RNA sequence: GGGAACGACUCGAGUAGAGUCGAAAACGCCGUAAACGAUGCGCACUAAAUCGGUGCCGGUCUGACCCGGUAUCGGUCGACGUGAAAACGAUAAGUGCGCCGCCUGGGGAGUACGGUCGCAAGGCUAGGAGGCUUAAUUGUUCGCAAUUAAGCCUCCAAAAGAAACAACAACAACAAC
Reactivity to DMS in 0.01 (KOAc 150mM, MgCl2 10mM, bicine 150mM(pH8.5), 24C), signal-to-noise 1, nucleotides 027 to 126: c070g010c000c070g060u040a020a080a090c090g030a100u010g000c020g000c000a000c000u020a120a190a020u000c040g000g010u000g000c040c000g000g000u000c000u050g030a200c120c000c060g000g000u000a000u000c030g020g000u000c060g010a210c020g000u000g010a090a070a140a040c020g070a120u000a090a060g020u020g000c000g000c000c000g000c060c030u000g000g000g000g100a150g000u020a060c100g000g020u060c010g090c060a120a060g000g000c120u060a080
Reactivity to 2A3 in 0.01 (KOAc 150mM, MgCl2 10mM, bicine 150mM(pH8.5), 24C), signal-to-noise 3, nucleotides 027 to 126: c060g070c000c010g080u080a040a040a060c040g070a070u080g000c030g000c000a000c010u050a060a040a010u020c000g000g000u000g000c010c000g010g060u110c240u230g190a140c020c000c000g000g000u030a010u000c000g000g030u020c020g040a040c050g030u050g080a120a080a000a010c000g000a050u030a040a070g020u000g000c000g000c000c000g010c000c010u040g000g000g000g020a030g030u070a020c010g010g030u010c000g000c070a060a060g050g000c000u010a050
An RNA of 177 nucleotides, treated with DMS and 2A3 and read out base by base. The data come from the RNA Mapping Database (RMDB), library RFM100. For DMS the reverse transcriptase was MarathonRT. For DMS, 2,010 sequencing reads were counted. For 2A3, 2,008 sequencing reads were counted. Conditions: 150 mM KOAc, 10 mM MgCl2 and 150 mM bicine (pH 8.5), 24 C.